[RMDB]
This 177-nucleotide RNA was probed chemically with DMS.
Conditions: 150 mM KOAc, 10 mM MgCl2 and 150 mM bicine (pH 8.5), 24 C.
Reactivities are rounded to 0.1 and cut off at 0 and 3.
It was measured as part of the RMDB library TTRDEL.
RNA sequence: GGGAACGACUCGAGUAGAGUCGAAAAGAUAUGGAACUGCACAGAGGGUGGGAUCGGAAACGAUCCCAAGCCCGACGAAGUGUUUCCUAAGUCAAAACGAUCCUAACAGUUCGCUGUUAGGAUCGAACACAUGAUGCAGCUUCGGCUGCAUCAUGUGAAAAGAAACAACAACAACAAC
Reactivity to DMS in 0.01 (KOAc 150mM, MgCl2 10mM, bicine 150mM(pH8.5), 24C), signal-to-noise 1, nucleotides 027 to 126: g000a040u000a030u000g000g000a020a040c300u050g040c000a020c010a010g000a040g010g010g010u000g010g000g030a010u000c020g020g010a010a000a020c010g000a000u000c000c020c020a010a030g010c000c000c000g010a170c210g030a070a070g010u010g000u000u000u010c000c000u000a010a130g000u000c000a030a060a060a210c000g030a030u000c000c000u000a010a000c000a010g000u000u000c180g030c000u000g000u000u000a000g010g010a010u000c010g040a030a090